[RMDB]
RNA sequence: GGGAACGACUCGAGUAGAGUCGAAAAAACCCGUUGAUUGAAAUUGAACCGUCCUGUUAUCGAAAGAUAGGCAGAAGAUACGAAAUGUGUGACAGCAUGGGAAGUAAAGGCGGACCGUGGUUCCCUUAAAAUCGUCGAAUCUUCGGAUUCGACGAAACUUACUUCCCUUCUUCGGAAGGGAAGUAAGAAAAGAAACAACAACAACAAC
Reactivity to DMS in 0.01 (KOAc 150mM, MgCl2 10mM, bicine 150mM(pH8.5), 24C), signal-to-noise 1, nucleotides 027 to 156: a070a140c010c050c010g010u030u010g010a150u000u010g000a110a120a100u000u020g020a090a140c010c010g020u000c070c000u000g000u000u030a040u000c020g010a200a200a300g000a000u000a000g060g060c000a000g000a080a060g000a110u000a070c090g000a020a060a060u030g030u000g000u030g000a110c210a140g020c030a060u000g030g010g000a100a100g030u020a100a070a050g000g010c040g000g010a060c070c080g040u000g040g000u000u000c000c000c000u000u000a020a070a060a110u000c040g030u000c000g040a000a000u000c040u010u000c240g040g000a050u000u000c000g000a020c000g000a000a080a070